RNA sequence: GGGAACGACUCGAGUAGAGUCGAAAACGAAACGAGCAUGGUCACGAUAUCGCCGUCCAAGGGAGGAGAGAAGAAGGAAGAAAUGGCCCUUCCCGCCGACACGUCCACUCGCCACAUGGGCCGUCGCUCCGAGUAGAUGUUUCGACAUCUACUCGGAAAAAGAAACAACAACAACAAC
Reactivity to DMS in 0.01 (KOAc 150mM, MgCl2 10mM, bicine 150mM(pH8.5), 24C), signal-to-noise 2, nucleotides 027 to 126: c070g000a100a130a150c170g020a030g000c120a080u010g000g020u010c040a060c110g000a090u000a050u010c090g020c040c020g030u010c040c030a090a090g000g020g010a080g000g030a040g000a110g000a050a100g000a080a060g020g020a090a090g010a010a060a090u020g000g000c040c010c030u010u000c030c000c000g000c070c030g030a070c100a050c170g020u020c010c000a080c070u000c050g000c020c000a090c150a120u020g020g000g020c040c040g050u000c140g000c220
Reactivity to 2A3 in 0.01 (KOAc 150mM, MgCl2 10mM, bicine 150mM(pH8.5), 24C), signal-to-noise 1, nucleotides 027 to 126: c010g040a060a040a000c070g000a010g030c040a030u050g070g000u060c030a010c160g020a000u020a030u120c090g000c010c000g060u000c030c000a100a090g050g040g000a030g000g040a070g030a000g010a140a000g010a020a060g050g010a040a020g020a030a140a040u120g020g000c000c010c000u030u010c010c000c000g030c030c020g040a020c010a000c060g050u000c000c020a050c020u000c040g010c000c000a040c000a120u140g000g000g000c000c000g060u000c020g020c040